[RMDB]
RNA sequence: GGGAACGACUCGAGUAGAGUCGAAAACAACACAAUUUCAUUUGUGCCAAUCAUUCUAACAAAGUAUACCUCGGUCUCAGUGAUGGCAUACUUUGCUGGAUUGAUUGGUACACAUGAAAUUGUGAUGCAUCUUUAUUAGGUUCGCCUAAUAAAGAUGAAAAGAAACAACAACAACAAC
Reactivity to DMS in 0.01 (KOAc 150mM, MgCl2 10mM, bicine 150mM(pH8.5), 24C), signal-to-noise 7, nucleotides 027 to 126: c030a110a200c000a010c000a000a010u000u000u000c000a000u000u000u000g000u000g000c000c000a000a000u000c000a010u000u000c000u010a000a020c000a010a010a010g010u000a000u000a050c000c010u000c040g010g010u020c180u020c260a160g020u020g000a030u030g020g000c030a010u000a000c000u000u000u000g010c040u000g000g000a010u000u000g000a000u000u000g000g010u000a000c000a000c040a000u000g010a000a000a000u000u000g010u000g000a050u010g000
Reactivity to 2A3 in 0.01 (KOAc 150mM, MgCl2 10mM, bicine 150mM(pH8.5), 24C), signal-to-noise 9, nucleotides 027 to 126: c030a030a010c000a000c000a000a000u000u000u000c000a000u000u000u010g000u000g000c000c000a000a000u000c000a000u000u000c000u010a010a010c000a000a000a000g000u000a000u010a020c010c010u050c060g150g110u120c190u070c210a160g070u160g200a090u230g020g000c000a000u000a000c000u010u000u000g000c010u010g000g000a000u000u010g000a000u000u000g000g000u000a000c000a000c000a000u000g000a000a000a000u000u000g000u000g000a000u070g030